[RMDB]
RNA sequence: GGGAACGACUCGAGUAGAGUCGAAAACAGCAGGCAAAGUCUCUUGAGACCCAAAAACUAGACUUUCGUAACUAGGAAUAACAGCGGUCACAUUCUGUUGAGCAUUCAUCACCCAUUUGCUAAACGCCCCUUCCACACUGUUCGCAGUGUGGAAGGGAAAAGAAACAACAACAACAAC
Reactivity to DMS in 0.01 (KOAc 150mM, MgCl2 10mM, bicine 150mM(pH8.5), 24C), signal-to-noise 1, nucleotides 027 to 126: c030a030g000c010a060g050g090c080a090a110a000g000u090c000u000c100u000u000g000a000g000a250c000c000c000a000a010a000a020a000c180u000a000g000a000c130u000u090u000c090g000u000a140a300c130u000a000g000g000a090a000u150a060a060c140a120g080c080g110g100u130c000a000c040a140u000u000c000u000g000u030u000g000a300g090c010a000u000u000c050a000u000c060a000c000c060c010a260u000u030u030g010c000u000a060a140a030c240g000c110
Reactivity to 2A3 in 0.01 (KOAc 150mM, MgCl2 10mM, bicine 150mM(pH8.5), 24C), signal-to-noise 3, nucleotides 027 to 126: c020a020g030c030a000g050g000c010a130a060a000g080u020c010u030c000u140u140g040a080g080a150c010c010c030a000a090a020a000a050c030u050a000g050a050c000u130u210u130c170g060u050a120a050c050u000a000g090g100a130a120u160a100a030c030a050g070c050g060g020u070c010a000c000a210u110u050c030u070g050u040u050g010a040g000c030a050u060u060c010a060u140c030a090c000c000c030a020u110u070u060g010c050u040a090a000a000c010g050c000
Chemical mapping of a 177-nucleotide RNA with DMS and 2A3. DMS (dimethyl sulfate) methylates the pairing face of unpaired adenines and cytosines. The RNA was probed in 150 mM KOAc, 10 mM MgCl2 and 150 mM bicine (pH 8.5) at 24 C. For DMS the reverse transcriptase was MarathonRT. 2A3 adducts were read by reverse transcription with SuperScript II with manganese.